[RMDB]
RNA sequence: GGGAACGACUCGAGUAGAGUCGAAAAGAUAUGGACCCAGCUGCAAACUCGCACUCGGAAACGAGUGGCGAGGACGUAUAGCUGGUCCUAAGUCAAACGCUUACAAAACUUCGGUUUUGUAAGCGAACACCCUGAUUUUGUUCGCAAAAUCAGGGUGAAAAGAAACAACAACAACAAC
Reactivity to 2A3 in 0.01 (KOAc 150mM, MgCl2 10mM, bicine 150mM(pH8.5), 24C), signal-to-noise 1, nucleotides 027 to 126: g020a030u060a050u090g000g000a040c160c150c090a020g000c000u050g000c060a210a100a300c000u010c000g010c000a010c030u000c000g070g010a030a130a090c030g010a010g000u030g130g000c020g010a000g010g000a020c060g060u060a080u200a300g010c000u000g040g040u010c000c000u010a120a000g040u010c060a210a000a050c050g000c010u000u000a000c000a000a020a030a020c020u050u080c280g120g000u020u000u000u000g020u000a000a000g000c020g000a000a000
Reactivity to DMS in 0.01 (KOAc 150mM, MgCl2 10mM, bicine 150mM(pH8.5), 24C), signal-to-noise 1, nucleotides 027 to 126: g030a030u010a300u010g000g010a020c140c100c000a040g040c010u000g030c050a050a290a230c020u060c000g010c000a070c030u000c000g000g010a030a100a110c000g010a000g020u010g050g010c030g010a000g000g000a050c300g020u000a110u000a020g020c000u000g000g010u000c000c000u000a070a090g020u000c020a050a090a180c010g020c000u000u000a030c010a000a020a000a010c000u000u010c160g010g020u000u000u000u000g000u000a000a020g010c040g000a030a040